[RMDB]
RNA sequence: GGGAACGACUCGAGUAGAGUCGAAAACAAGCUCUUUUUGCUGAAAUGUUGUUCGCUCGUACAAAGCAUUUAAUGAAAUUAUUUAAUGGCAUGCCAUUAAAAUAACAAAAGAGCAAAUAAGAACAACCCUGCCAUAUUAGUUCGCUAAUAUGGCAGGAAAAGAAACAACAACAACAAC
Reactivity to 2A3 in 0.01 (KOAc 150mM, MgCl2 10mM, bicine 150mM(pH8.5), 24C), signal-to-noise 4, nucleotides 027 to 126: c040a080a000g010c010u020c010u060u100u060u120u110g020c040u070g020a000a050a160u140g010u070u050g030u030u080c060g010c110u040c100g020u110a110c060a050a150a020g040c030a060u060u140u140a090a150u170g070a050a070a060u060u050a020u020u030u010a000a000u000g030g000c150a090u220g050c020c000a000u000u010a010a020a010a060u070a020a010c040a020a050a030a010g050a000g000c010a050a050a010u230a080a020g030a010a020c020a000a020c010
Reactivity to DMS in 0.01 (KOAc 150mM, MgCl2 10mM, bicine 150mM(pH8.5), 24C), signal-to-noise 2, nucleotides 027 to 126: c060a090a150g000c020u000c010u000u010u000u020u000g010c010u000g010a070a060a060u000g000u000u000g010u000u020c100g010c010u000c060g010u030a090c140a120a130a070g030c020a050u020u010u020a090a060u020g000a110a050a160u010u000a020u000u010u000a020a020u000g000g020c000a080u020g010c000c000a010u000u000a010a020a010a010u000a010a030c110a010a020a050a020g040a010g030c000a070a060a100u010a050a090g000a020a040c060a090a120c130
Structure probing data (2A3 and DMS) for a 177-nucleotide construct.
For 2A3, 3,136 sequencing reads were counted.
2A3 adducts were read by reverse transcription with SuperScript II with manganese.
For DMS the reverse transcriptase was MarathonRT.
The reactions ran in a buffer of 150 mM KOAc, 10 mM MgCl2 and 150 mM bicine (pH 8.5), at 24 C.
Values are in units of 0.01, from 0 to 300, in steps of 10.